[RMDB]
RNA sequence: GGGAACGACUCGAGUAGAGUCGAAAAGUUACACGCUUCGGCGUGUAACAAAUACUCAAACGGUCGCGGAAACGAGACGACACUCUAGGAGGCAUCCAUGCAAAACCCAUUGCUUCGGCAAUGGGAACUUUGUUCUGUACUUCGGUACAGAACAAAGAAAAGAAACAACAACAACAAC
Reactivity to 2A3 in 0.01 (KOAc 150mM, MgCl2 10mM, bicine 150mM(pH8.5), 24C), signal-to-noise 1, nucleotides 027 to 126: g000u000u000a010c000a000c030g000c020u010u060c190g070g000c010g000u000g000u000a000a000c000a000a000a000u010a010c010u010c000a030a080a070c120g080g000u030c030g050c010g010g010a090a170a070c070g040a050g050a090c010g060a020c000a020c000u090c030u060a100g150g010a000g020g050c010a040u000c030c010a020u100g020c030a020a030a150a250c010c000c000a010u000u000g000c000u000u000c240g080g000c000a010a000u000g000g000g000a000a010
Reactivity to DMS in 0.01 (KOAc 150mM, MgCl2 10mM, bicine 150mM(pH8.5), 24C), signal-to-noise 2, nucleotides 027 to 126: g000u000u000a000c000a020c030g010c000u000u000c180g040g000c000g060u010g010u010a010a000c000a040a050a120u010a100c030u010c030a110a130a100c170g040g010u010c030g020c040g000g000a100a070a090c050g020a180g020a050c020g010a080c120a020c100u000c050u010a080g040g020a120g030g010c140a060u030c030c010a080u010g000c200a090a010a140a200c000c000c000a000u010u020g000c000u000u000c210g000g000c010a010a010u000g000g020g000a000a010